[RMDB]
RNA sequence: GGGAACGACUCGAGUAGAGUCGAAAACAGCGGCCACAACAUGAACCCUGUCUUCAUAUACUUGGUGCCGAAGCCCUGCCCCCGCGCGCGUAUCGUGCUCCCCGGUUUGUGCGCUCGGCCGGUACGCCAUCCAUCGGUAGUUCGCUACCGAUGGAUGAAAAGAAACAACAACAACAAC
Reactivity to 2A3 in 0.01 (KOAc 150mM, MgCl2 10mM, bicine 150mM(pH8.5), 24C), signal-to-noise 1, nucleotides 027 to 126: c040a010g070c070g010g050c020c020a040c030a120a020c010a120u090g060a050a030c020c010c150u070g100u100c030u050u030c000a000u090a030u000a230c050u070u080g020g070u110g080c000c000g040a030a030g010c020c000c010u040g000c020c010c010c010c000g040c000g000c010g010c000g000u040a020u090c000g030u100g050c060u030c000c020c010c010g030g050u030u110u120g020u060g020c030g000c010u000c000g020g000c000c000g000g020u000a010c000g000c000
Reactivity to DMS in 0.01 (KOAc 150mM, MgCl2 10mM, bicine 150mM(pH8.5), 24C), signal-to-noise 2, nucleotides 027 to 126: c130a060g020c060g000g000c020c050a050c100a060a080c220a110u000g000a080a060c050c080c110u000g010u010c100u000u010c070a030u040a090u010a100c110u000u000g010g020u010g020c020c000g000a080a080g010c040c030c020u000g020c000c030c020c020c040g020c120g020c090g020c020g010u000a020u010c020g010u010g000c020u000c030c020c050c040g020g000u000u010u000g020u000g000c050g000c050u000c070g000g000c000c010g020g000u000a020c040g010c060

The record gives the reactivity of an RNA of 177 nucleotides to 2A3 and DMS. Conditions: 150 mM KOAc, 10 mM MgCl2 and 150 mM bicine (pH 8.5), 24 C. DMS adducts were read by reverse transcription with MarathonRT.